[RMDB]
RNA sequence: GGGAACGACUCGAGUAGAGUCGAAAAGGCAAAAACGGGACCAUUCGGGCGGUGAGGAAUGGAGAUAUGUCCGCCAAUGAAACGAUCCUGUGUAUUCCUCAAACGGCGUGCCUGCGCUCGAUAUUGAGUAAUGCUAAAUCUUCGGAUUUAGCAUUACAAAAGAAACAACAACAACAAC
Reactivity to 2A3 in 0.01 (KOAc 150mM, MgCl2 10mM, bicine 150mM(pH8.5), 24C), signal-to-noise 6, nucleotides 027 to 126: g040g000c030a080a060a030a010a030c020g010g000g020a010c020c010a030u050u040c030g050g020g000c030g000g040u070g070a100g050g150a140a120u180g130g070a090g040a060u140a040u120g140u010c000c010g010c010c000a030a110u190g030a040a030a010c080g010a060u010c000c010u010g020u010g010u050a080u030u040c010c000u040c000a070a060a050c030g020g000c020g010u030g010c000c020u030g000c010g000c010u090c040g070a060u080a120u190u140g050a050
Reactivity to DMS in 0.01 (KOAc 150mM, MgCl2 10mM, bicine 150mM(pH8.5), 24C), signal-to-noise 7, nucleotides 027 to 126: g000g010c060a100a070a050a190a040c030g010g010g000a040c030c030a110u000u000c040g000g000g020c020g010g010u000g010a110g020g010a080a070u000g010g010a110g000a120u000a070u010g000u010c010c010g000c010c010a090a090u010g010a030a050a070c160g010a040u000c010c000u000g010u010g010u010a110u000u000c010c010u000c150a050a090a140c130g000g000c030g000u000g010c030c020u000g000c050g000c010u010c080g010a120u000a080u000u000g000a280